This 177-nucleotide RNA was probed chemically with 2A3. Reactivities are given for positions 27 through 126.

[RMDB]
RNA sequence: GGGAACGACUCGAGUAGAGUCGAAAAGUCCUUCUCUGUGGGCCUCUCAUAGUGUACCCAUGCCAUAGCAAAUGGCAGCCUCGAACCAUUGCCCAGUCCCCUUACCUGUGGGCUGUGAGCACUGAAGUGGGCUGACGAGAUUCGUCUCGUCAGCCCAAAAAGAAACAACAACAACAAC
Reactivity to 2A3 in 0.01 (KOAc 150mM, MgCl2 10mM, bicine 150mM(pH8.5), 24C), signal-to-noise 1, nucleotides 027 to 126: g040u010c000c000u050u000c100u000c000u000g090u080g010g060g020c000c000u060c000u070c000a020u000a050g120u100g040u110a060c000c000c000a050u020g000c000c020a050u100a060g120c000a120a260a170u010g250g000c120a000g090c020c020u100c000g030a050a010c010c000a050u000u040g010c000c000c070a000g060u100c000c000c000c000u000u050a150c040c040u000g050u160g070g000g000c000u040g000u010g000a070g020c000a000c030u060g000a130a020g080